[RMDB]
RNA sequence: GGGAACGACUCGAGUAGAGUCGAAAAGGUCAUGGUAGCUAAGAAUAUUGUAUCUAAAAUUGGGGAGUGGGGAGAUGUUUGGUUAUAUUCCCUUCUCAUCGAUGGUCUAGAUGUGCGAGGUGACUCUCCUUAGUAAGCCAUUCGUGGCUUACUAAGGAAAAGAAACAACAACAACAAC
Reactivity to 2A3 in 0.01 (KOAc 150mM, MgCl2 10mM, bicine 150mM(pH8.5), 24C), signal-to-noise 7, nucleotides 027 to 126: g020g000u010c000a020u090g070g030u060a030g020c030u080a070a070g070a280a050u170a050u160u230g060u060a030u030c030u040a040a100a070a080u060u040g010g000g030g010a030g030u050g000g000g040g000a050g010a040u050g120u100u170u110g150g010u160u030a060u010a030u120u060c000c010c000u020u000c020u000c010a070u060c010g020a040u050g040g060u030c050u030a010g010a040u050g060u030g070c010g030a030g020g030u040g000a010c000u000c010u000
Reactivity to DMS in 0.01 (KOAc 150mM, MgCl2 10mM, bicine 150mM(pH8.5), 24C), signal-to-noise 2, nucleotides 027 to 126: g010g020u000c010a030u010g020g000u010a070g010c060u030a070a140g010a090a100u010a060u020u020g010u010a050u010c010u000a040a080a190a070u010u000g020g000g000g010a050g040u000g000g000g000g000a030g030a060u010g010u000u000u000g020g030u010u010a030u000a080u020u000c000c000c000u000u000c020u000c000a020u000c030g030a020u000g000g000u010c100u010a030g010a030u000g000u000g000c020g010a110g010g020u000g000a060c030u010c050u010
This 177-nucleotide RNA was probed chemically with 2A3 and DMS. Source: RMDB libraries RFM100 and RFMREP, as collected in RNAgym. The RNA was probed in 150 mM KOAc, 10 mM MgCl2 and 150 mM bicine (pH 8.5) at 24 C.